[RMDB]
RNA sequence: GGGAACGACUCGAGUAGAGUCGAAAAGACGCGAUAGGAAUGCAUCGUGUAGUGGAUGUUGGCGACAUGUCGACAUAGCAGUUAUAUGGUGUGAAUGCUGCGCAACUACGUAGAUGAUAUCUAUAUUCAUAAAUAUAGCAAUCACUUAGCGUGUAGUUGCAAGAGUGGAUUUCGAUCCACUCUUGCAAAAAGAAACAACAACAACAAC
Reactivity to 2A3 in 0.01 (KOAc 150mM, MgCl2 10mM, bicine 150mM(pH8.5), 24C), signal-to-noise 2, nucleotides 027 to 156: g050a020c000g000c000g020a020u110a060g110g040a140a010u140g000c010a040u000c010g000u000g010u090a110g000u020g040g090a020u000g000u000u010g030g050c040g070a250c230a300u300g000u010c010g000a010c000a030u020a020g110c020a010g070u140u140a080u040a030u120g090g060u130g000u050g100a080a140u190g000c010u010g000c020g000c010a020a070c030u030a010c020g030u030a110g040a110u060g020a000u040a020u080c000u000a000u000a000u030u110c020a020u190a300a180a000u000a040u000a020g010c050a040a020u000c060a040c030u050u010a000g020c040g020u040g010u120a080g080u050
An RNA of 207 nucleotides, treated with 2A3 and read out base by base. For 2A3, 529 sequencing reads were counted. It was measured as part of the RMDB library OK3TST. The reactions ran in a buffer of 150 mM KOAc, 10 mM MgCl2 and 150 mM bicine (pH 8.5), at 24 C.